[RMDB]
RNA sequence: GGGAACGACUCGAGUAGAGUCGAAAAGAUAUGGACGUCAUAUCCUUCAUCGAUCUUAGUCGGAAACGACUAAGGGAGAAGGUAUACGUCCUAAGUCAAAACCGCGACUGGUUCGCCAGUCGCGGAAGUAGAACGCUACGUUCGCGUAGCGUUCUACAAAAGAAACAACAACAACAAC
Reactivity to 2A3 in 0.01 (KOAc 150mM, MgCl2 10mM, bicine 150mM(pH8.5), 24C), signal-to-noise 1, nucleotides 027 to 126: g090a000u060a030u110g030g000a000c000g010u000c200a030u040a140u300c000c000u080u070c060a300u300c020g050a020u000c030u010u020a010g010u000c010g000g000a090a070a070c020g020a010c000u000a000a000g000g020g000a020g040a010a020g020g000u040a040u000a030c000g000u000c000c000u000a070a050g070u010c020a000a040a130a190c000c000g000c020g010a000c000u010g000g100u100u120c260g000c140c000a000g000u000c000g000c000g010g000a040a000
Reactivity to DMS in 0.01 (KOAc 150mM, MgCl2 10mM, bicine 150mM(pH8.5), 24C), signal-to-noise 1, nucleotides 027 to 126: g000a060u010a300u000g000g000a000c000g040u000c300a020u030a010u030c000c000u050u040c080a300u000c140g000a160u010c000u010u010a000g000u000c000g040g010a170a050a240c000g030a000c000u040a010a060g010g020g030a030g000a000a020g000g030u000a010u000a010c040g000u000c000c000u000a020a050g030u000c050a100a060a140a100c040c000g000c000g000a030c000u000g010g000u000u010c300g000c000c000a010g000u000c000g010c010g000g000a070a000
Source information: The record gives the reactivity of an RNA of 177 nucleotides to 2A3 and DMS. The 2A3 profile rests on 2,122 reads. The reactions ran in a buffer of 150 mM KOAc, 10 mM MgCl2 and 150 mM bicine (pH 8.5), at 24 C. The DMS profile rests on 770 reads. 2A3 adducts were read by reverse transcription with SuperScript II with manganese. It was measured as part of the RMDB library TTRDES.